Source information:
Chemical mapping of a 207-nucleotide RNA with 2A3 and DMS. For 2A3 the reverse transcriptase was SuperScript II with manganese. The data come from the RNA Mapping Database (RMDB), library RNAMAK. For DMS, 5,009 sequencing reads were counted. Reactivities are given for positions 27 through 156.

[RMDB]
RNA sequence: GGGAACGACUCGAGUAGAGUCGAAAAAGCGGUUUCGACCGCUACGUCAGCGUACUACAGUUCGGUCGAGGAUCUCCUGAACUACAGAGUUCCCAAAUAGGAACUCUGCAGGAGGGAGACCAGAACUGUAUCGCAGCAAUCACGUUUCGACGUGAAAAUGAAGAGGUACAUUCGUGUACCUCUUCAUAAAAGAAACAACAACAACAAC
Reactivity to 2A3 in 0.01 (KOAc 150mM, MgCl2 10mM, bicine 150mM(pH8.5), 24C), signal-to-noise 3, nucleotides 027 to 156: a020g050c040g000g020u110u070u180c300g090a050c010c000g010c010u010a030c040g200u160c150a040g020c030g030u080a120c070u000a000c000a000g000u000u010c010g000g000u010c000g030a260g000g000a000u000c000u000c000c000u020g040a090a080c050u140a050c170a000g010a000g000u000u000c030c020c000a160a240a070u230a050g000g000a000a000c000u000c000u000g000c000a000g000g010a010g000g000g010a010g000a000c000c000a080g010a000a000c000u000g020u000a000u040c000g010c000a000g010c020a010a160u050c010a010c030g020u030u120u180c190g100a020c000g000u020g020a050a090a020
Reactivity to DMS in 0.01 (KOAc 150mM, MgCl2 10mM, bicine 150mM(pH8.5), 24C), signal-to-noise 3, nucleotides 027 to 156: a050g050c020g000g000u010u000u010c180g030a050c000c000g020c000u010a000c040g000u030c050a170g000c020g040u010a100c080u000a040c000a030g000u010u000c000g000g030u000c110g010a260g000g000a070u000c010u000c010c010u020g010a090a300c010u000a030c010a010g000a020g000u000u000c000c000c020a070a160a180u010a060g000g000a010a010c000u000c000u010g110c000a020g000g020a300g020g010g000a050g000a010c010c000a080g010a010a020c000u000g050u000a000u010c050g000c030a290g060c080a060a080u000c030a020c010g000u000u000u010c110g040a060c010g040u000g000a000a020a070